The data come from the RNA Mapping Database (RMDB), library OK2TST. Structure probing data (2A3 and DMS) for a 177-nucleotide construct. The reactions ran in a buffer of 150 mM KOAc, 10 mM MgCl2 and 150 mM bicine (pH 8.5), at 24 C. For DMS the reverse transcriptase was MarathonRT.

RNA sequence: GGGAACGACUCGAGUAGAGUCGAAAAACAUGCGUUUGGGCAUGGUAAAGCAGAAUCGCUCGCGGCAUUGGCACAAGCCAUGUUUAUUUCGGGCUCCGCGUGCUUUUUGAUCCUCAACGGUGUCGAAAUUAAAAUAAUGCUUCGGCAUUAUUUUAAUAAAAGAAACAACAACAACAAC
Reactivity to 2A3 in 0.01 (KOAc 150mM, MgCl2 10mM, bicine 150mM(pH8.5), 24C), signal-to-noise 1, nucleotides 027 to 126: a000c000a010u020g020c020g040u190u250u180g130g050g000c000a000u040g050g000u080a090a090a000g010c050a020g040a110a050u060c040g010c000u020c000g000c040g000g000c030a050u050u160g020g000c030a050c050a210a030g000c010c000a020u060g060u030u140u040a210u060u140u120c030g050g020g020c050u030c050c010g010c000g030u010g000c000u000u050u000u010u020g030a020u000c010c020u050c010a060a060c060g130g010u050g000u020c000g050a100a220
Reactivity to DMS in 0.01 (KOAc 150mM, MgCl2 10mM, bicine 150mM(pH8.5), 24C), signal-to-noise 3, nucleotides 027 to 126: a070c010a010u000g000c030g010u000u000u010g020g010g000c010a020u000g010g010u010a060a140a110g010c050a060g000a060a060u000c180g010c020u000c040g020c120g010g010c140a090u000u010g020g020c040a050c180a120a080g020c000c010a030u000g000u000u000u010a130u020u020u000c080g000g000g000c010u010c030c040g020c050g010u000g010c020u000u000u000u000u000g000a080u000c030c010u000c150a080a090c120g000g010u010g010u000c010g010a070a100